[RMDB]
RNA sequence: GGGAACGACUCGAGUAGAGUCGAAAACUCGCCGCCCUCAUGGCGCGCGGCGAACGAAGCUCGGCCCGAUGCGGACUCGGCGCUCAGGCAACGGGCGCGCCGGUAUGCGAAUACCACCGCCUCGUUGGGAUCUUUGGCGACUGCCUGCAGCUUUGAGGUAAAGGGUUUUAUUCGUAAAACCCUUUACAAAAGAAACAACAACAACAAC
Reactivity to DMS in 0.01 (KOAc 150mM, MgCl2 10mM, bicine 150mM(pH8.5), 24C), signal-to-noise 1, nucleotides 027 to 156: c050u000c020g100c030c010g050c050c300c080u010c150a030u000g030g030c060g010c070g070c010g030g010c030g020a140a140c040g000a110a070g000c020u000c040g000g040c000c000c000g020a100u000g030c040g000g020a110c050u010c060g010g010c010g000c030u000c000a100g010g020c040a090a090c000g010g030g000c040g050c100g090c050c040g160g040u000a030u000g030c240g000a270a060u000a070c090c010a130c010c020g000c020c020u000c050g050u000u000g000g000g000a100u000c030u020u000u000g010g020c020g050a120c100u000g000c020c020u000g000c050a100g010c010u010u010u000g000a210g010
Reactivity to 2A3 in 0.01 (KOAc 150mM, MgCl2 10mM, bicine 150mM(pH8.5), 24C), signal-to-noise 2, nucleotides 027 to 156: c020u000c000g000c000c010g010c000c020c030u140c130a230u190g120g000c060g060c070g020c030g030g010c000g000a030a010c040g050a060a010g040c020u040c070g030g010c020c020c010g040a050u070g030c020g050g040a090c040u030c050g040g010c000g000c060u050c020a060g110g000c000a010a010c020g000g000g000c010g000c060g000c050c060g000g000u000a010u010g060c100g070a040a020u050a020c000c000a020c020c020g030c000c000u130c050g060u020u030g000g020g030a110u050c050u030u070u190g040g000c030g020a110c020u120g000c000c000u030g000c010a010g010c020u010u040u130g080a060g060